RNA sequence: GGGAACGACUCGAGUAGAGUCGAAAAGUUCCUGUGCAGAUGUCUGAGGCUUCUUUCUCCUUUAGUCAAAUCUGAUUUCUAUUUCUUCUUGGUUAAUACCCCCAGAGUGCUCCUGGCUGCUUGUGCCAUUACAGACUUAGUUCGCUAAGUCUGUAAUAAAAGAAACAACAACAACAAC
Reactivity to DMS in 0.01 (KOAc 150mM, MgCl2 10mM, bicine 150mM(pH8.5), 24C), signal-to-noise 9, nucleotides 027 to 126: g010u000u000c000c000u000g030u010g010c060a050g010a060u010g010u010c040u000g010a130g010g010c090u010u010c040u010u000u010c030u000c030c040u010u000u010a070g010u010c050a050a080a090u010c070u010g010a100u000u000u010c050u000a080u010u010u000c020u000u010c030u000u000g000g000u000u010a070a090u020a200c060c010c010c020c020a080g010a070g010u010g010c030u000c030c020u010g000g010c020u000g010c070u010u010g010u000g010c040c060
Reactivity to 2A3 in 0.01 (KOAc 150mM, MgCl2 10mM, bicine 150mM(pH8.5), 24C), signal-to-noise 9, nucleotides 027 to 126: g010u020u010c000c000u010g040u050g030c030a030g020a130u050g050u040c020u050g050a040g040g030c010u060u010c000u030u110u020c030u040c030c000u050u090u180a050g030u090c040a040a060a140u040c040u050g040a080u040u100u020c050u070a150u060u070u020c020u060u000c010u040u050g040g010u050u080a090a030u130a230c010c000c000c010c020a010g020a020g070u050g010c010u020c020c010u010g040g000c020u020g010c020u040u050g040u060g040c000c010

Structure probing data (DMS and 2A3) for a 177-nucleotide construct. Values are in units of 0.01, from 0 to 300, in steps of 10. The data come from the RNA Mapping Database (RMDB), libraries RFM100 and RFMREP. For 2A3 the reverse transcriptase was SuperScript II with manganese. The RNA was probed in 150 mM KOAc, 10 mM MgCl2 and 150 mM bicine (pH 8.5) at 24 C.